[RMDB]
RNA sequence: GGGAACGACUCGAGUAGAGUCGAAAAUGCAGCCGUCGGUGCUGUUCCAGGCUUGAUUUGCUACUACUUGUCUUCACCCGUCGAGUGCGUCCAAUCGGCUGUACUCAUCCUCCGAGAGUGAAAUCGAGGCGGCGGCGACGUUCUCUUCGAGGUGUGCAUGUCUGUUAACAUUCGUGUUAACAGACAUAAAAGAAACAACAACAACAAC
Reactivity to DMS in 0.01 (KOAc 150mM, MgCl2 10mM, bicine 150mM(pH8.5), 24C), signal-to-noise 2, nucleotides 027 to 156: u000g020c000a050g000c020c020g030u010c100g010g010u000g010c030u000g010u010u000c030c020a180g010g000c010u000u000g000a150u000u000u000g040c020u010a140c020u010a130c080u010u020g010u010c040u000u000c020a050c020c010c020g000u020c100g010a050g050u000g010c030g010u000c020c050a060a130u000c060g030g000c000u010g010u000a070c040u000c020a110u010c010c000u000c050c070g020a200g010a120g010u000g010a050a100a100u000c050g020a150g030g020c030g020g000c030g000g050c030g010a070c020g020u000u010c000u010c010u000u000c010g000a080g020g000u010g010u010g020c110
Reactivity to 2A3 in 0.01 (KOAc 150mM, MgCl2 10mM, bicine 150mM(pH8.5), 24C), signal-to-noise 5, nucleotides 027 to 156: u140g000c000a010g020c020c010g190u210c160g120g070u200g000c020u000g030u050u040c030c020a030g030g000c020u100u070g050a170u200u090u180g060c040u040a090c020u040a050c010u120u090g050u080c000u100u120c040a010c000c000c000g000u000c000g000a010g000u010g000c000g000u000c020c030a020a090u080c050g160g000c020u010g020u110a260c020u010c000a050u030c020c010u020c060c140g160a110g000a030g060u230g120a050a110a080u160c140g000a010g010g000c000g000g000c020g020g020c050g000a010c000g010u020u010c000u000c000u000u010c030g060a160g020g000u030g020u020g020c010